[RMDB]
RNA sequence: GGGAACGACUCGAGUAGAGUCGAAAAGAGCCGACAGAGAAGUCGGGAAGCGACGAGAGAGAAUAGAACACAUUGGAAUUCGAGAUACUGGCACAAAAUGACAGACGUCGCCAUAUUCUCUGAGAAGAUCCCAUGGUGGAUUCGUCCACCAUGGGAUAAAAGAAACAACAACAACAAC
Reactivity to 2A3 in 0.01 (KOAc 150mM, MgCl2 10mM, bicine 150mM(pH8.5), 24C), signal-to-noise 4, nucleotides 027 to 126: g040a020g100c000c000g010a010c010a000g270a010g020a270a000g010u000c000g020g000g010a020a010g020c020g020a010c030g000a020g000a000g010a000g020a160a110u080a060g110a130a000c070a010c010a170u100u150g050g100a050a080u030u020c040g000a000g010a010u080a100c050u020g010g000c040a000c000a070a080a030a120u170g030a000c000a020g080a050c030g020u040c050g000c010c000a010u020a050u110u010c000u000c000u010g010a050g020a120a020g070
Reactivity to DMS in 0.01 (KOAc 150mM, MgCl2 10mM, bicine 150mM(pH8.5), 24C), signal-to-noise 3, nucleotides 027 to 126: g000a070g010c000c020g000a040c020a170g000a160g000a190a060g000u000c010g010g000g020a080a130g000c020g030a050c000g010a250g030a090g000a170g000a030a030u010a100g020a130a070c080a050c220a130u020u030g010g020a100a070u020u010c030g000a120g000a140u030a130c210u020g010g000c030a060c160a050a040a070a260u050g000a100c050a050g000a220c090g010u000c030g000c030c040a070u000a070u020u000c000u000c000u060g040a090g020a130a100g000